[RMDB]
RNA sequence: GGGAACGACUCGAGUAGAGUCGAAAAAUUUACCGGCCCACCCGGGUCAGGGCGCUCCGUCGCGGCCGUCGCAUUCGCCGCCGCCCUCGAAUGCACAGACCCCACCAUGGUCGGUUGCGGGCGCUGCCCUUGAACGACUGUUCGCAGUCGUUCAAGGAAAAGAAACAACAACAACAAC
Reactivity to DMS in 0.01 (KOAc 150mM, MgCl2 10mM, bicine 150mM(pH8.5), 24C), signal-to-noise 1, nucleotides 027 to 126: a090u020u010u010a140c020c040g000g010c010c020c060a120c210c170c270g010g050g010u000c030a090g010g020g020c020g000c030u000c060c050g010u010c150g000c040g010g020c020c020g000u010c150g030c080a070u000u000c040g030c100c070g000c020c010g000c000c030c030u010c020g000a040a050u020g000c030a080c120a160g040a180c020c000c010c050a090c120c110a090u000g010g020u010c030g010g000u000u000g030c090g020g000g010c050g000c050u010g000c070